The record gives the reactivity of an RNA of 177 nucleotides to DMS and 2A3. For DMS, 2,000 sequencing reads were counted. DMS (dimethyl sulfate) methylates the pairing face of unpaired adenines and cytosines. Conditions: 150 mM KOAc, 10 mM MgCl2 and 150 mM bicine (pH 8.5), 24 C. It was measured as part of the RMDB library TTRDEL.
[RMDB]
RNA sequence: GGGAACGACUCGAGUAGAGUCGAAAAGAUAUGGAGAUGGCGAGCUAGACGUCGGAAACGACGUGUAGCGAUGAGCCACUCCUAAGUCAAACCAUACUUGGAGCUGUUCGCAGCUCCAAGUAUGGAACAAAAUAACGAGCUUCGGCUCGUUAUUUUGAAAAGAAACAACAACAACAAC
Reactivity to DMS in 0.01 (KOAc 150mM, MgCl2 10mM, bicine 150mM(pH8.5), 24C), signal-to-noise 3, nucleotides 027 to 126: g000a020u010a300u000g000g010a020g010a120u000g020g000c010g020a290g010c000u000a000g000a010c010g000u010c000g010g010a100a090a220c000g030a010c020g000u000g030u000a010g010c000g000a060u000g040a300g020c010c000a030c010u010c000c000u010a020a050g000u010c030a150a150a190c010c010a000u000a010c020u000u000g000g010a010g010c000u010g010u000u010c250g020c000a020g000c020u010c000c000a020a000g000u000a000u000g000g000a040a110
Reactivity to 2A3 in 0.01 (KOAc 150mM, MgCl2 10mM, bicine 150mM(pH8.5), 24C), signal-to-noise 2, nucleotides 027 to 126: g010a010u100a010u170g000g000a040g070a110u030g000g000c040g040a030g040c000u010a010g000a150c000g010u030c020g010g010a090a030a010c020g010a010c020g010u060g230u000a000g000c000g010a030u070g010a000g000c000c000a010c000u020c000c010u020a240a000g020u000c040a090a020a070c000c010a000u010a000c000u010u000g000g000a000g010c000u000g050u120u300c300g030c240a000g010c000u010c010c000a000a000g000u000a000u000g000g010a020a000